[RMDB]
RNA sequence: GGGAACGACUCGAGUAGAGUCGAAAAGAAGGUUUGAAAGGAGGUGCUAAUGGGAAUUGGUAUGAUUUCAUACUACCCAAGAAAGCUUCUGCAAAAACUGGAUCCUCAAUUCUGGCCGAUUUGUGGACAUCAAAGCAUUUUUCGAAAUGCUUUGAUGAAAAGAAACAACAACAACAAC
Reactivity to 2A3 in 0.01 (KOAc 150mM, MgCl2 10mM, bicine 150mM(pH8.5), 24C), signal-to-noise 4, nucleotides 027 to 126: g030a020a020g020g010u030u040u050g100a140a070a030g010g010a030g030g040u060g010c030u060a050a050u010g000g010g060a130a160u170u160g050g000u000a000u010g070a160u020u070u060c000a000u000a010c000u020a030c020c000c000a000a010g030a020a040a010g000c000u010u000c010u020g050c070a050a060a030a020a000c010u010g010g020a030u030c000c010u040c010a020a050u090u000c030u080g100g030c040c020g080a110u040u040u120g130u110g020g000a010
Reactivity to DMS in 0.01 (KOAc 150mM, MgCl2 10mM, bicine 150mM(pH8.5), 24C), signal-to-noise 7, nucleotides 027 to 126: g010a300a180g000g000u000u000u000g010a090a170a110g000g010a010g020g020u010g000c050u000a120a200u000g000g010g010a210a140u000u000g000g020u000a000u000g010a290u010u010u000c010a010u000a010c000u000a120c000c000c010a010a020g000a110a120a130g000c010u000u000c010u000g010c190a080a110a010a010a010c010u000g000g010a180u000c020c000u000c130a030a060u010u000c050u000g000g010c130c080g000a060u010u000u000g010u000g010g020a280